[RMDB]
RNA sequence: GGGAACGACUCGAGUAGAGUCGAAAAGCAACAUCACUGGUUCAGAGGAUGUUCGCCCCGGCGAGCAGAUUCUGAGGCGAGUUCCAGUUAAGGGACCGUCGCAACGCGUGGCAAGUGAUGGGCCCCUUUGGCUAGGGGCUUCAGGUACAUGCUAGUCGAUCACAAGUAAGUUCGCUUACUUGUGAUCAAAAGAAACAACAACAACAAC
Reactivity to DMS in 0.01 (KOAc 150mM, MgCl2 10mM, bicine 150mM(pH8.5), 24C), signal-to-noise 3, nucleotides 027 to 156: g030c030a080a080c020a030u000c010a020c010u000g010g040u010u000c040a080g020a050g010g020a300u000g010u000u000c010g020c030c010c100c220g020g000c000g000a040g000c010a050g000a300u000u000c020u000g020a060g010g030c000g010a120g030u000u000c010c010a210g000u000u000a170a170g010g000g010a020c010c010g040u000c010g010c040a090a070c070g020c070g040u000g010g010c020a110a090g000u020g000a040u010g010g020g010c000c000c000c000u000u000u000g030g020c070u000a000g020g010g010g020c000u010u010c020a010g020g010u000a070c040a160u000g000c000u010a100g010u010c110
Reactivity to 2A3 in 0.01 (KOAc 150mM, MgCl2 10mM, bicine 150mM(pH8.5), 24C), signal-to-noise 7, nucleotides 027 to 156: g060c020a010a060c000a010u010c000a010c010u040g130g050u080u020c010a010g010a010g040g010a030u000g010u010u000c000g010c000c020c020c090g150g000c000g000a010g000c000a010g000a020u040u000c000u010g000a010g010g010c000g010a130g010u010u010c010c010a060g070u180u270a180a260g000g000g000a000c000c000g020u020c020g000c030a050a140c080g010c020g040u050g050g000c030a040a010g000u000g000a010u000g000g010g000c010c000c000c000u030u070u080g140g020c180u050a010g000g000g000g000c000u010u040c030a020g000g010u060a030c020a030u020g010c020u060a030g080u090c080